[RMDB]
Overview:
Structure probing data (2A3 and DMS) for a 207-nucleotide construct. Values are in units of 0.01, from 0 to 300, in steps of 10. DMS adducts were read by reverse transcription with MarathonRT. The 2A3 profile rests on 2,422 reads. It was measured as part of the RMDB library OK3TST.
RNA sequence: GGGAACGACUCGAGUAGAGUCGAAAAGGUAUCUAAUCUGCAUGUGUAAAUAACCAGCUCUAAGGAGGAUGUGAUAUACCACCCAGUGUGGGGACUGCUGGGUAUGGCAGUGGUUCCUACACUGAAGCAUGCACUGGAGUCACUUGGAGGCUUAUUAGGUCAUCAUUUAUUUCGAUAAAUGAUGACCAAAAGAAACAACAACAACAAC
Reactivity to 2A3 in 0.01 (KOAc 150mM, MgCl2 10mM, bicine 150mM(pH8.5), 24C), signal-to-noise 4, nucleotides 027 to 156: g020g000u060a030u070c120u140a130a000u020c010u060g040c020a080u030g080u030g090u160a050a130a060u100a050a090c020c020a030g040c030u010c030u080a090a110g110g010a010g020g020a070u040g050u050g130a050u040a000u010a170c020c040a010c010c020c010a000g000u000g010u000g000g010g000g000a000c010u000g010c010u010g030g130g070u190a120u090g100g040c000a000g000u010g000g020u010u010c000c000u010a000c000a000c000u000g000a000a010g030c000a010u030g000c000a000c030u030g030g050a050g070u090c020a020c140u050u040g070g030a030g070g000c020u060u080a100u170u190a180
Reactivity to DMS in 0.01 (KOAc 150mM, MgCl2 10mM, bicine 150mM(pH8.5), 24C), signal-to-noise 2, nucleotides 027 to 156: g010g030u000a040u010c090u000a080a100u000c040u000g010c040a060u000g020u000g000u010a110a110a100u000a070a130c050c030a090g040c060u010c040u000a110a130g030g000a100g020g010a070u000g010u000g010a120u010a150u000a110c010c020a130c020c030c010a030g000u010g010u000g010g010g020g010a030c020u010g000c000u010g010g000g050u000a080u010g010g040c020a030g000u000g040g030u000u000c010c000u020a030c020a020c000u000g010a060a080g000c040a050u000g000c010a020c040u000g000g060a150g020u000c040a050c080u000u020g010g000a100g000g040c040u000u000a040u000u000a230